[RMDB]
Structure probing data (DMS and 2A3) for a 177-nucleotide construct.
For 2A3, 1,369 sequencing reads were counted.
For 2A3 the reverse transcriptase was SuperScript II with manganese.
Source: RMDB libraries RFM100 and RFMREP, as collected in RNAgym.
RNA sequence: GGGAACGACUCGAGUAGAGUCGAAAAAUACGUGCCGUACGAGUAGCCCAAAACGUGGAAAUUACAAUACAGGUUUUUGCAUAACCAUCAAUCGCAUUGUUGGGUGAAAGUUGGAGGAUAAAUCCUCCAUAGAGAAGCACUUCGGUGCUUCUCUAUGAAAAGAAACAACAACAACAAC
Reactivity to DMS in 0.01 (KOAc 150mM, MgCl2 10mM, bicine 150mM(pH8.5), 24C), signal-to-noise 9, nucleotides 027 to 126: a100u010a050c080g020u030g010c030c010g000u020a010c020g010a080g010u000a110g000c010c000c000a040a020a050a060c080g010u000g000g000a100a110a080u030u020a100c210a070a080u050a110c190a150g010g010u000u000u010u030u030g010c140a070u030a060a070c120c010a070u010c140a060a050u020c110g010c060a300u010u010g010u000u000g000g000g010u000g000a060a060a080g000u000u000g000g010a010g010g000a080u020a040a060a110u010c000c000u000c010
Reactivity to 2A3 in 0.01 (KOAc 150mM, MgCl2 10mM, bicine 150mM(pH8.5), 24C), signal-to-noise 3, nucleotides 027 to 126: a040u300a080c090g000u030g130c010c020g010u030a020c000g000a000g010u010a010g000c040c000c000a010a030a020a000c040g030u030g010g070a070a080a080u240u120a080c080a050a090u100a170c070a150g000g040u060u060u080u170u090g180c100a040u130a180a040c000c010a030u070c040a010a110u050c030g010c080a040u060u090g080u110u030g030g030g020u040g010a010a000a010g000u010u030g020g000a000g010g000a040u130a170a090a110u090c000c010u000c000